[RMDB]
RNA sequence: GGGAACGACUCGAGUAGAGUCGAAAACGAGGCUCAGAGAUGUUCAGUAACUUGCUCACGAUCACCCAGCCAGGAUGUGUUGGAGCUUGGAGGCAAACCCAUGCCGGUCUGAUCAAACAGCCCAAGUUCUUGGUCACCAAGUUGUACCAUCCCACAGUGGAUGAAGCUUAUUCGUAAGCUUCAUCCAAAAAGAAACAACAACAACAAC
Reactivity to DMS in 0.01 (KOAc 150mM, MgCl2 10mM, bicine 150mM(pH8.5), 24C), signal-to-noise 2, nucleotides 027 to 156: c030g010a100g030g040c020u000c000a120g020a180g000a120u000g030u030u000c040a060g040u010a080a100c040u000u000g020c040u000c030a110c090g000a070u000c030a090c010c010c000a220g030c090c100a240g040g010a040u000g020u000g010u010u000g010g000a070g000c030u000u000g030g000a180g020g030c000a040a050a150c050c010c050a200u000g030c010c040g000g030u000c010u000g020a090u020c070a080a100a100c020a070g020c020c010c060a030a240g010u000u000c010u000u000g020g020u000c040a080c010c040a050a300g010u010u010g000u010a050c010c000a100u000c010c000c000a030c150a140g010
Reactivity to 2A3 in 0.01 (KOAc 150mM, MgCl2 10mM, bicine 150mM(pH8.5), 24C), signal-to-noise 1, nucleotides 027 to 156: c010g030a090g020g080c020u040c060a020g030a000g010a110u070g000u060u040c000a010g010u040a010a080c020u050u060g030c000u000c040a200c090g070a100u050c000a040c020c030c010a070g140c050c040a080g020g030a100u150g040u010g010u150u040g070g000a000g030c000u000u020g030g040a050g000g000c010a000a000a050c010c010c000a030u040g020c000c000g000g060u100c010u000g010a010u020c000a020a040a090c020a010g010c000c020c000a060a000g020u030u000c090u050u050g000g000u050c030a030c140c020a010a050g040u030u010g040u070a050c000c000a040u020c000c040c000a040c030a010g230